[RMDB]
The data come from the RNA Mapping Database (RMDB), library OK2TRN. The record gives the reactivity of an RNA of 177 nucleotides to DMS and 2A3. The DMS profile rests on 17,014 reads. DMS adducts were read by reverse transcription with MarathonRT. Values cover nucleotides 27 to 126. 2A3 adducts were read by reverse transcription with SuperScript II with manganese. The reactions ran in a buffer of 150 mM KOAc, 10 mM MgCl2 and 150 mM bicine (pH 8.5), at 24 C.
RNA sequence: GGGAACGACUCGAGUAGAGUCGAAAAUCAAAGUAGACAUUGAACUUUGACUUUAAUUGUAGGGAAUUUUGGGUGAGUUUGAUGUGUUUUAGAUUGCCACUCAGAAGUCAGUUAAAUUCUGUAUUGCUACAUCUUCUCUUUUCGAAGAGAAGAUGUAAAAAGAAACAACAACAACAAC
Reactivity to DMS in 0.01 (KOAc 150mM, MgCl2 10mM, bicine 150mM(pH8.5), 24C), signal-to-noise 8, nucleotides 027 to 126: u000c010a030a030a060g010u000a090g010a120c110a090u010u000g010a070a040c020u000u000u000g010a070c070u000u000u000a030a050u000u000g010u000a100g020g010g010a070a070u000u000u000u000g010g000g010u000g000a080g010u000u000u000g010a050u000g010u000g010u010u010u000u010a100g010a090u000u010g000c080c030a030c040u000c020a040g000a030a050g010u000c060a040g010u000u010a040a050a140u000u000c020u000g010u010a100u000u010g010c200
Reactivity to 2A3 in 0.01 (KOAc 150mM, MgCl2 10mM, bicine 150mM(pH8.5), 24C), signal-to-noise 6, nucleotides 027 to 126: u020c010a010a010a030g030u050a030g050a100c040a140u020u090g030a050a020c010u070u020u070g060a050c010u110u100u100a050a040u070u060g060u080a070g030g070g050a060a070u030u030u060u090g060g000g020u050g010a130g040u030u050u080g030a020u030g070u010g100u070u070u020u030a050g010a050u010u110g040c020c000a030c020u020c010a020g010a080a020g070u060c040a000g020u040u080a040a090a090u110u010c020u040g090u080a140u080u160g050c020